[RMDB]
RNA sequence: GGGAACGACUCGAGUAGAGUCGAAAAACGGUCGUACGCGACCGAGGCGCGGCUAGGUCGACGGACCGAACACUGGCAUCCCGCAUUCUGCCAUCCGCCGCGCAGCUUCUUCUCAAACGGUGCGGAAAAAAGUAGGACACCUUCGGGUGUCCUACAAGAUGUAACAAAUCUUCGGAUUUGUUACAUCAAAAGAAACAACAACAACAAC
Reactivity to 2A3 in 0.01 (KOAc 150mM, MgCl2 10mM, bicine 150mM(pH8.5), 24C), signal-to-noise 4, nucleotides 027 to 156: a000c010g010g000u000c010g020u050a030c260g020c020g130a000c000c000g000a020g000g000c000g000c000g000g000c000u010a000g010g000u010c040g110a230c200g200g030a000c000c000g000a010a010c020a010c020u010g000g000c000a020u090c040c010c000g000c000a030u300u090c010u030g000c000c000a020u010c000c030g010c000c000g000c010g010c010a010g000c010u160u090c010u060u010c030u020c040a100a100a050c060g010g020u000g000c000g000g000a080a040a020a020a000a000g000u000a000g000g000a000c000a000c000c010u030u110c220g040g000g010u000g000u010c000c000u000a000c000a000a000
Reactivity to DMS in 0.01 (KOAc 150mM, MgCl2 10mM, bicine 150mM(pH8.5), 24C), signal-to-noise 2, nucleotides 027 to 156: a130c060g000g000u010c000g040u000a110c180g030c010g020a030c010c010g040a030g020g010c040g010c010g000g000c030u000a150g020g000u000c050g020a220c260g020g010a030c020c020g010a110a040c200a160c270u020g000g020c030a070u000c020c010c000g000c020a070u000u000c060u000g000c020c020a050u000c050c040g010c000c030g010c020g000c000a010g000c040u000u000c020u000u020c030u010c030a070a100a070c110g000g050u000g000c000g020g000a020a060a060a090a120a130g010u000a020g010g000a020c000a020c000c020u000u000c300g040g030g020u000g010u000c000c000u010a000c000a020a050
Background:
An RNA of 207 nucleotides, treated with 2A3 and DMS and read out base by base. The data come from the RNA Mapping Database (RMDB), library M2RFPK. DMS adducts were read by reverse transcription with MarathonRT. 2A3 is a SHAPE reagent: it acylates the 2'-hydroxyl of flexible nucleotides of all four kinds. The RNA was probed in 150 mM KOAc, 10 mM MgCl2 and 150 mM bicine (pH 8.5) at 24 C.